The data come from the RNA Mapping Database (RMDB), library OK2TRN. Chemical mapping of a 177-nucleotide RNA with DMS and 2A3.
RNA sequence: GGGAACGACUCGAGUAGAGUCGAAAACAGUGGCUGAGCGGCUUCCUGUUCUCAUGAGAGGUGAGGACUUUGUGCGGGAGAGGACACGGGCCAUGCAGCCUGCGCCAGAGCCGUCUGGCAGUGGCAGCUCUAAGGGUGUAUUCGUACACCCUUAGAGAAAAGAAACAACAACAACAAC
Reactivity to DMS in 0.01 (KOAc 150mM, MgCl2 10mM, bicine 150mM(pH8.5), 24C), signal-to-noise 7, nucleotides 027 to 126: c100a140g020u000g010g010c010u010g010a120g020c060g010g010c040u000u010c080c030u000g010u000u000c010u000c020a060u000g000a160g000a100g010g010u000g010a050g010g010a040c040u000u010u000g010u010g010c100g000g010g000a110g000a070g010g010a090c070a060c140g010g000g000c020c030a050u010g010c090a080g000c010c000u010g020c190g000c000c010a030g000a120g010c080c080g000u000c050u000g010g010c010a060g020u000g010g010c050a190g000
Reactivity to 2A3 in 0.01 (KOAc 150mM, MgCl2 10mM, bicine 150mM(pH8.5), 24C), signal-to-noise 6, nucleotides 027 to 126: c040a040g060u040g100g000c020u040g030a040g070c050g040g000c030u150u100c010c010u030g020u040u010c010u000c000a040u120g100a070g030a030g300g040u040g030a040g030g020a030c000u090u150u130g110u090g050c070g020g050g010a100g010a040g020g050a020c030a010c100g050g000g000c030c010a030u120g020c020a010g030c000c000u030g020c040g000c000c010a010g000a020g070c050c050g140u070c040u040g000g000c000a010g030u060g040g010c030a010g020
Overview
Conditions: 150 mM KOAc, 10 mM MgCl2 and 150 mM bicine (pH 8.5), 24 C. For 2A3, 10,468 sequencing reads were counted.